[RMDB]
RNA sequence: GGGAACGACUCGAGUAGAGUCGAAAAUGGUGGAUUUUCCUGCACCGUUAUGUCCAAGUAGUGCAUAAAAAUCCCCUUGUUCAACAGUCAGAUCAAUACCUUUCACAGCUUGAACACCUGUUGCAUAACAUGUCCAUGAGUUCGCUCAUGGACAUGUAAAAGAAACAACAACAACAAC
Reactivity to DMS in 0.01 (KOAc 150mM, MgCl2 10mM, bicine 150mM(pH8.5), 24C), signal-to-noise 3, nucleotides 027 to 126: u050g020g030u010g050g000a030u000u000u000u000c030c150u000g020c010a020c010c050g010u010u010a100u010g010u010c210c190a060a130g000u010a070g010u010g000c050a020u010a000a020a020a030a040u010c010c010c000c030u000u010g020u000u010c020a040a050c080a080g010u010c090a070g010a040u000c100a090a070u000a100c160c030u000u000u000c070a090c160a080g020c090u000u020g000a020a010c020a080c110c040u010g000u000u000g000c130a040u010a130
Reactivity to 2A3 in 0.01 (KOAc 150mM, MgCl2 10mM, bicine 150mM(pH8.5), 24C), signal-to-noise 3, nucleotides 027 to 126: u130g000g060u110g030g000a030u090u020u010u010c000c010u060g000c010a000c000c010g040u110u110a140u180g140u050c100c020a070a020g050u090a010g000u140g000c010a000u050a040a050a020a020a030u030c020c000c010c000u020u050g060u040u030c020a020a060c010a020g150u140c030a020g020a080u040c020a040a070u130a230c020c010u060u120u140c080a030c020a110g040c060u010u030g010a050a000c010a030c030c010u050g060u130u110g060c050a030u120a150